Overview: This 177-nucleotide RNA was probed chemically with DMS and 2A3. Source: RMDB library OK2TST, as collected in RNAgym. 2A3 is a SHAPE reagent: it acylates the 2'-hydroxyl of flexible nucleotides of all four kinds. Reactivities are given for positions 27 through 126. The reactions ran in a buffer of 150 mM KOAc, 10 mM MgCl2 and 150 mM bicine (pH 8.5), at 24 C.

RNA sequence: GGGAACGACUCGAGUAGAGUCGAAAAGCUUGGCAUAACGGGGUAUGAUGUCAUGGUUAUCUAUAACUUCUGCUAACUAUGACGAGGAGCAUCGAGUGUCUGAACAACCGGACUAUCCCGCUGUCGACAUACGAAAGGGGUUCGCCCCUUUCGUAUGAAAAGAAACAACAACAACAAC
Reactivity to DMS in 0.01 (KOAc 150mM, MgCl2 10mM, bicine 150mM(pH8.5), 24C), signal-to-noise 5, nucleotides 027 to 126: g020c090u000u000g010g000c030a040u010a100a090c040g010g000g010g020u010a020u010g020a090u000g010u000c010a010u010g010g010u000u000a020u000c010u000a080u010a170a130c260u010u010c180u010g000c100u010a020a020c010u000a010u000g010a030c050g010a120g010g010a090g000c080a050u000c050g000a130g020u000g010u010c060u010g010a090a110c180a070a090c170c030g010g000a070c080u010a050u000c020c000c000g020c100u000g010u000c040g000a200
Reactivity to 2A3 in 0.01 (KOAc 150mM, MgCl2 10mM, bicine 150mM(pH8.5), 24C), signal-to-noise 3, nucleotides 027 to 126: g020c060u050u070g000g000c010a010u030a110a010c010g000g010g000g010u050a030u140g110a070u140g040u040c010a010u020g000g020u010u010a020u010c030u050a150u040a300a250c060u230u130c070u090g000c020u010a010a010c000u000a010u030g010a010c020g010a040g020g050a050g060c020a030u040c040g050a040g150u100g040u040c000u040g040a110a030c040a060a000c110c000g000g000a020c020u020a020u030c000c000c010g000c000u000g030u030c010g000a020